The record gives the reactivity of an RNA of 177 nucleotides to 2A3 and DMS. 2A3 adducts were read by reverse transcription with SuperScript II with manganese. The data come from the RNA Mapping Database (RMDB), library RFM100. The RNA was probed in 150 mM KOAc, 10 mM MgCl2 and 150 mM bicine (pH 8.5) at 24 C. DMS (dimethyl sulfate) methylates the pairing face of unpaired adenines and cytosines.
RNA sequence: GGGAACGACUCGAGUAGAGUCGAAAACGGAGGUGAUCCCUCCCUCCUGCCUCCCCGCCAGCCUGACCUGUGCCUGGCUCGCGGGCCGCAGUCUCGGCCCCGGCGCGCCCCUGGCAGCUCUCGGCGCGAAGUCCCUAAGGUUCGCCUUAGGGACUUCAAAAGAAACAACAACAACAAC
Reactivity to 2A3 in 0.01 (KOAc 150mM, MgCl2 10mM, bicine 150mM(pH8.5), 24C), signal-to-noise 2, nucleotides 027 to 126: c030g020g000a000g000g020u110g030a160u130c000c030c000u050c000c010c000u010c010c020u010g020c000c020u030c020c000c000c010g010c020c020a030g010c010c010u070g040a150c010c030u070g010u050g030c000c030u020g000g000c000u030c010g000c030g000g000g010c010c000g030c050a090g100u020c050u020c100g020g000c000c000c040c010g090g020c050g000c000g000c000c000c000c010u020g020g000c000a030g020c000u010c000u030c040g030g000c000g000c030
Reactivity to DMS in 0.01 (KOAc 150mM, MgCl2 10mM, bicine 150mM(pH8.5), 24C), signal-to-noise 2, nucleotides 027 to 126: c240g010g020a020g030g000u020g050a050u000c040c010c060u030c010c000c020u010c000c000u030g000c120c060u000c070c000c050c030g000c060c060a040g060c300c040u020g010a110c090c030u020g060u020g010c050c020u000g030g000c000u000c090g010c100g020g020g040c000c020g050c160a090g020u030c060u010c030g010g000c030c000c000c120g000g020c020g030c140g020c050c010c200c000u020g000g000c010a110g010c050u000c020u010c030g020g000c010g050c140